[RMDB]
RNA sequence: GGGAACGACUCGAGUAGAGUCGAAAAACAAGAGUUCGCUCUUGUAGCCACUUUAUUUCUUCUACUCGGAUCGUUCGGCACGUACCUGCCGAUAAAGAAUGGAGUUAUGGCGGGGUUUCGACCCCGCGGUUGAGAGAUCUUUCGAGAUCUCUCAACCAAAAGAAACAACAACAACAAC
Reactivity to DMS in 0.01 (KOAc 150mM, MgCl2 10mM, bicine 150mM(pH8.5), 24C), signal-to-noise 2, nucleotides 027 to 126: a050c040a020a030g010a010g000u020u010c210g020c010u010c000u000u010g010u000a040g010c150c180a050c120u010u000u020a090u000u000u000c010u010u000c000u010a010c000u010c010g030g000a030u000c010g020u000u000c000g010g000c000a030c110g010u000a050c110c070u000g010c020c010g020a150u000a050a040a060g000a100a140u010g010g010a100g010u000u010a090u010g010g020c010g010g000g020g000u000u000u010c150g000a090c000c000c000c010g010c020
Reactivity to 2A3 in 0.01 (KOAc 150mM, MgCl2 10mM, bicine 150mM(pH8.5), 24C), signal-to-noise 1, nucleotides 027 to 126: a000c010a010a000g000a010g020u040u070c100g010c030u000c010u000u010g000u000a000g100c010c050a100c040u110u170u140a110u000u070u020c020u040u020c000u020a000c020u000c000g020g040a080u000c000g000u050u010c030g010g010c010a020c030g120u080a060c000c000u000g000c000c000g040a090u180a150a130a020g130a010a070u160g090g030a050g080u160u120a100u110g090g000c000g000g000g000g000u020u160u080c120g030a040c010c020c030c000g000c000